The record gives the reactivity of an RNA of 207 nucleotides to DMS and 2A3. For 2A3 the reverse transcriptase was SuperScript II with manganese. The data come from the RNA Mapping Database (RMDB), library M2RFPK. The 2A3 profile rests on 1,120 reads. DMS adducts were read by reverse transcription with MarathonRT. Reactivities are given for positions 27 through 156. As a SHAPE reagent, 2A3 marks flexible, mostly unpaired nucleotides at the ribose 2'-OH.
[RMDB]
RNA sequence: GGGAACGACUCGAGUAGAGUCGAAAAUCAUUGAGAUGCUGGACGCUAUGGUCGUCCUCCUCCGGCUGACCUCCUUCUCAGCUGCUGACCGGCGCCGCACAGGCGGCAUCUCAGCUUCGUGUGCAAAAAAAGAAUGGUCGGUUCGCCGACCAUUCAACAUUCAUCGGAUGUUCGCAUCCGAUGAAUGAAAAGAAACAACAACAACAAC
Reactivity to DMS in 0.01 (KOAc 150mM, MgCl2 10mM, bicine 150mM(pH8.5), 24C), signal-to-noise 1, nucleotides 027 to 156: u000c110a130u000u000g010a010g010a010u000g000c000u000g030g040a060c030g030c020u010a090u020g040g000u000c000g040u000c040c000u000c030c000u000c040c020g040g020c030u010g040a060c080c180u000c100c080u000u010c110u020c000a030g020c020u000g030c020u000g010a140c030c050g020g000c020g000c020c030g050c190a100c160a130g020g010c080g020g040c010a010u000c000u010c050a110g000c050u020u000c120g010u010g000u010g000c000a000a000a080a180a170a140a160g010a020a010u000g020g040u000c000g020g000u000u000c300g050c060c000g000a030c000c010a020u000u000c000a060a130
Reactivity to 2A3 in 0.01 (KOAc 150mM, MgCl2 10mM, bicine 150mM(pH8.5), 24C), signal-to-noise 2, nucleotides 027 to 156: u130c020a040u010u090g000a000g010a020u010g010c010u040g030g000a000c010g000c040u130a220u300g210g020u210c000g020u000c010c000u010c020c010u000c000c000g010g000c010u000g000a020c000c030u080c010c000u150u040c020u010c010a000g010c000u030g040c080u050g040a040c080c070g000g000c000g000c000c000g030c020a180c060a170g000g000c000g000g000c000a010u000c000u010c000a000g010c030u100u120c100g120u100g030u120g130c100a070a110a000a000a000a000a110g020a000a000u000g000g010u010c020g020g060u030u040c190g060c050c000g000a000c000c000a000u000u000c000a000a010